The record gives the reactivity of an RNA of 177 nucleotides to DMS and 2A3. It was measured as part of the RMDB libraries RFM100 and RFMREP. Reactivities are given for positions 27 through 126. Conditions: 150 mM KOAc, 10 mM MgCl2 and 150 mM bicine (pH 8.5), 24 C.
[RMDB]
RNA sequence: GGGAACGACUCGAGUAGAGUCGAAAAUCUUCCUCUAACUGAGUAAUUUCUUCUUCUGUUAACUCUUCCGUAGUAAUGUGAAUAUGUAACUCUUUUUGUGUGCUUUUCAUAGGUGCCUGAUGAUUAACGGACUAUGAAGGUUCGCCUUCAUAGUCCGAAAAGAAACAACAACAACAAC
Reactivity to DMS in 0.01 (KOAc 150mM, MgCl2 10mM, bicine 150mM(pH8.5), 24C), signal-to-noise 1, nucleotides 027 to 126: u010c090u030u000c010c000u010c070u040a040a090c030u030g000a110g000u030a040a110u000u000u000c040u000u000c090u020u000c050u000g000u000u000a060a080c050u000c040u000u000c020c030g040u000a120g000u020a070a090u010g000u000g000a040a080u000a080u000g040u000a040a100c060u000c010u000u010u010u000u020g000u010g000u000g020c020u000u000u000u000c060a020u020a050g070g060u000g000c000c000u000g000a050u050g010a200u010u040a040a260
Reactivity to 2A3 in 0.01 (KOAc 150mM, MgCl2 10mM, bicine 150mM(pH8.5), 24C), signal-to-noise 4, nucleotides 027 to 126: u050c000u040u020c010c000u000c030u070a150a140c050u020g090a000g080u080a060a160u050u090u050c020u050u000c000u040u000c030u030g080u070u090a100a070c020u000c020u110u000c010c040g130u120a100g000u040a020a130u080g060u040g110a050a010u090a060u260g080u050a080a070c020u020c000u080u070u010u140u090g090u020g020u010g050c020u070u020u040u000c010a030u070a070g080g000u030g040c000c000u080g030a050u030g010a010u030u100a090a020